[RMDB]
RNA sequence: GGGAACGACUCGAGUAGAGUCGAAAAGCACGCUAGCAAGUUCGAUAUGACGGCGAUUCAUCGUUACAUCAUAAUCUUCAAAGCGAUCAGCAGAAACAUCAUCACCAAUCAUCUUAUAAGCCUUGUCAGCAAAUGCGAUAAUUGGGUUAGUCGCAUACCCACGCGACUGCUUCGGCAGUCGCGUGGGAAAAGAAACAACAACAACAAC
Reactivity to 2A3 in 0.01 (KOAc 150mM, MgCl2 10mM, bicine 150mM(pH8.5), 24C), signal-to-noise 1, nucleotides 027 to 156: g060c050a050c070g050c090u110a090g050c070a070a070g000u100u100c050g020a030u030a030u140g000a000c030g000g010c010g070a000u180u180c060a120u070c150g060u010u030a030c010a050u020c050a060u030a170a260u070c030u110u140c130a120a190a030g010c050g060a090u130c060a020g040c010a000g100a060a050a070c020a050u100c010a030u030c000a050c020c020a030a010u120c020a030u000c150u000u200a180u120a300a000g000c000c000u060u070g030u110c030a000g000c040a110a020a040u040g000c000g010a010u030a140a110u260u120g010g040g010u060u090a070g000u000c000g000c000a000u110a060